Structure probing data (DMS and 2A3) for a 177-nucleotide construct. It was measured as part of the RMDB library OK2TRN. Reactivities are given for positions 27 through 126. The RNA was probed in 150 mM KOAc, 10 mM MgCl2 and 150 mM bicine (pH 8.5) at 24 C. For DMS, 1,497 sequencing reads were counted.

RNA sequence: GGGAACGACUCGAGUAGAGUCGAAAAUACGCGGGCACCGUGGCCAGUGGGGUAAUGCGUUCAGGCGACGAAGUUGUCGUGCUGCCGAUCGGUAAGACCACCCGGAUCACCGCGAUCGACGGCCCGACGUCAUAGUCCCGUUCGCGGGACUAUGACGAAAAGAAACAACAACAACAAC
Reactivity to DMS in 0.01 (KOAc 150mM, MgCl2 10mM, bicine 150mM(pH8.5), 24C), signal-to-noise 2, nucleotides 027 to 126: u030a070c070g000c040g000g030g010c070a130c040c070g030u000g020g010c090c050a120g050u010g060g020g000g010u000a120a060u010g000c020g000u000u000c020a060g030g010c020g020a010c030g000a090a180g020u020u010g000u000c000g010u000g000c010u020g000c130c010g000a010u000c010g040g000u000a080a080g010a070c050c020a110c040c080c070g000g000a120u020c100a180c090c060g020c080g020a050u000c010g000a050c040g010g010c010c020c000g000a050
Reactivity to 2A3 in 0.01 (KOAc 150mM, MgCl2 10mM, bicine 150mM(pH8.5), 24C), signal-to-noise 1, nucleotides 027 to 126: u110a000c070g000c030g050g030g040c010a000c050c010g030u050g050g010c070c010a050g070u050g020g060g010g060u140a220a000u140g040c030g000u050u160c120a100g000g000c010g040a020c000g090a040a060g120u250u280g070u080c000g000u010g090c020u040g030c010c000g010a040u000c050g000g070u030a000a090g050a090c050c000a000c100c000c060g000g020a050u040c010a000c060c020g100c030g030a040u040c060g090a090c060g010g000c000c000c000g000a050